[RMDB]
RNA sequence: GGGAACGACUCGAGUAGAGUCGAAAAGAUAUGGAAUGUUCGGUAGCAGCGUAUCGGAAACGAUACGACCUGCUAUAAUCGAGACAUUCCUAAGUCAAACGCAGAGUCGGUUCGCCGACUCUGCGAACACUUUAGCAUUCUUCGGAAUGCUAAAGUGAAAAGAAACAACAACAACAAC
Reactivity to 2A3 in 0.01 (KOAc 150mM, MgCl2 10mM, bicine 150mM(pH8.5), 24C), signal-to-noise 2, nucleotides 027 to 126: g000a000u020a010u060g000g000a000a000u020g000u030u000c020g040g020u020a000g010c000a000g000c000g000u010a000u000c000g000g010a020a000a000c010g000a000u000a000c000g010a010c010c010u000g000c000u020a140u030a090a010u010c000g000a030g040a080c000a000u000u000c000c000u000a010a000g000u010c010a140a070a050c020g000c000a000g010a000g030u020c010g030g090u070u110c300g060c080c000g000a000c010u000c000u000g000c000g000a000a000
Reactivity to DMS in 0.01 (KOAc 150mM, MgCl2 10mM, bicine 150mM(pH8.5), 24C), signal-to-noise 3, nucleotides 027 to 126: g010a020u000a070u010g000g000a010a010u000g000u000u000c000g010g010u000a010g020c010a010g000c010g000u000a010u000c000g020g000a020a020a040c000g010a000u000a000c000g010a070c300c010u000g000c000u000a230u000a110a030u000c010g000a050g000a040c010a000u010u000c000c000u000a000a060g000u000c020a070a120a220c030g000c000a010g010a010g010u000c000g010g010u010u020c250g010c010c000g010a010c000u000c010u000g010c010g010a020a080